[RMDB]
RNA sequence: GGGAACGACUCGAGUAGAGUCGAAAAACUUUGGCCGACGCUGCUAGGCGGGUGCGCACUGCUGUCUGGCCCGGCGCCGCGCUAGGGCGCACGUUUCGCUCUGCGGACGGUAACCGGGCUGAAAUAAUGACUAUGAAUGUUUCGACAUUCAUAGUCAAAAAGAAACAACAACAACAAC
Reactivity to DMS in 0.01 (KOAc 150mM, MgCl2 10mM, bicine 150mM(pH8.5), 24C), signal-to-noise 5, nucleotides 027 to 126: a120c050u000u010u000g010g020c010c020g020a090c090g020c030u000g020c080u000a070g010g010c050g010g000g000u000g020c050g020c050a070c050u000g010c040u010g000u000c080u000g010g010c010c010c010g010g000c270g000c020c000g010c010g010c020u010a020g010g010g000c000g030c160a060c190g000u000u010u010c010g000c000u000c010u010g010c010g000g000a130c010g010g000u000a050a130c010c010g010g000g010c000u010g000a030a060a060u020a080a140
Reactivity to 2A3 in 0.01 (KOAc 150mM, MgCl2 10mM, bicine 150mM(pH8.5), 24C), signal-to-noise 2, nucleotides 027 to 126: a000c030u110u080u070g060g020c010c010g010a030c050g010c060u050g010c100u100a070g080g000c020g060g030g010u080g010c050g000c030a020c050u080g030c020u030g030u120c030u070g010g010c000c000c000g030g000c030g000c040c000g000c010g000c050u120a030g030g010g000c020g060c060a070c050g070u090u200u160c000g000c000u000c010u000g010c030g080g050a150c000g000g020u040a080a100c010c000g040g000g000c010u010g000a000a030a000u200a030a080